[RMDB]
RNA sequence: GGGAACGACUCGAGUAGAGUCGAAAAACUGGCGUGAUGUCAUGGAUGGUUUGCGCCCGCACACGCAGCGCCUCUGGUCCGGUUUGUCUGUCGGGCAGAAGGUGCGUUUCCUGCGCCAUCUGCGGCAGCACCGAGUACCAUUCGUGGUACUCGGUGCAAAAGAAACAACAACAACAAC
Reactivity to DMS in 0.01 (KOAc 150mM, MgCl2 10mM, bicine 150mM(pH8.5), 24C), signal-to-noise 2, nucleotides 027 to 126: a050c120u000g030g020c070g030u000g010a140u010g000u000c030a040u000g000g000a030u000g020g000u020u000u000g020c050g020c040c040c060g000c060a090c080a060c030g010c050a090g000c020g000c020c100u000c020u000g000g000u000c000c020g010g010u000u000u010g020u010c190u020g010u010c020g010g020g000c020a020g000a050a050g010g030u000g010c020g010u000u000u000c070c000u000g010c080g000c010c000a020u000c010u000g010c070g020g020c040a090
Reactivity to 2A3 in 0.01 (KOAc 150mM, MgCl2 10mM, bicine 150mM(pH8.5), 24C), signal-to-noise 2, nucleotides 027 to 126: a000c050u030g110g000c000g030u070g060a120u070g050u090c010a040u050g060g030a030u030g030g070u100u120u130g020c020g050c000c060c060g030c010a100c010a000c030g050c020a040g000c010g020c020c000u030c010u040g120g080u070c000c040g050g060u100u170u190g300u060c100u100g070u040c010g000g000g080c000a000g000a070a020g000g000u000g020c000g000u030u060u010c000c020u070g010c040g060c020c000a010u020c030u050g000c030g020g010c020a030

The record gives the reactivity of an RNA of 177 nucleotides to DMS and 2A3. The reactions ran in a buffer of 150 mM KOAc, 10 mM MgCl2 and 150 mM bicine (pH 8.5), at 24 C. For DMS, 2,928 sequencing reads were counted.